Chemical mapping of a 207-nucleotide RNA with DMS and 2A3.
RNA sequence: GGGAACGACUCGAGUAGAGUCGAAAAUACCCGGUGGAAACAACUGAAGCUCCCGAGAACCGCUUUUUCUCUAUCUUGCUGCUACCGGGGCGAGGGUGUUUAGCCCUUGGAACCGCAGUUGGUUCCUCGGAACUAAACUCGUGGUUCCUGUGGUACACACUACAACGUAGUUCGCUACGUUGUAGUGAAAAGAAACAACAACAACAAC
Reactivity to DMS in 0.01 (KOAc 150mM, MgCl2 10mM, bicine 150mM(pH8.5), 24C), signal-to-noise 2, nucleotides 027 to 156: u010a120c020c000c050g050g020u000g010g000a120a070a040c020a080a150c040u000g020a120a200g030c030u000c000c010c020g040a160g020a120a110c060c090g000c060u000u000u010u030u000c040u000c130u000a170u000c110u000u000g020c010u010g010c010u000a040c000c010g000g010g020g010c020g010a150g030g040g020u000g010u010u000u000a160g010c000c010c030u000u010g010g000a020a020c010c010g030c010a120g040u000u000g000g020u010u000c000c050u000c300g030g000a040a020c000u000a020a040a030c050u000c150g050u000g040g020u010u000c010c000u000g020u020g000g020u000a120c080a300
Reactivity to 2A3 in 0.01 (KOAc 150mM, MgCl2 10mM, bicine 150mM(pH8.5), 24C), signal-to-noise 2, nucleotides 027 to 156: u130a040c020c000c000g040g020u050g010g080a200a130a060c040a050a140c090u110g040a150a020g040c000u080c110c070c080g010a030g040a090a010c060c060g120c130u070u150u040u100u050c060u030c020u100a110u190c060u070u180g040c040u030g000c000u050a040c020c010g000g020g010g020c020g020a040g020g000g000u060g000u060u110u200a030g010c000c000c000u000u020g010g000a000a000c000c000g000c020a000g010u030u030g010g020u000u000c000c010u020c120g060g000a010a010c010u100a210a030a060c020u050c140g010u020g010g000u000u020c000c000u000g040u120g000g000u100a030c060a000
DMS adducts were read by reverse transcription with MarathonRT. The DMS profile rests on 3,404 reads. The reactions ran in a buffer of 150 mM KOAc, 10 mM MgCl2 and 150 mM bicine (pH 8.5), at 24 C.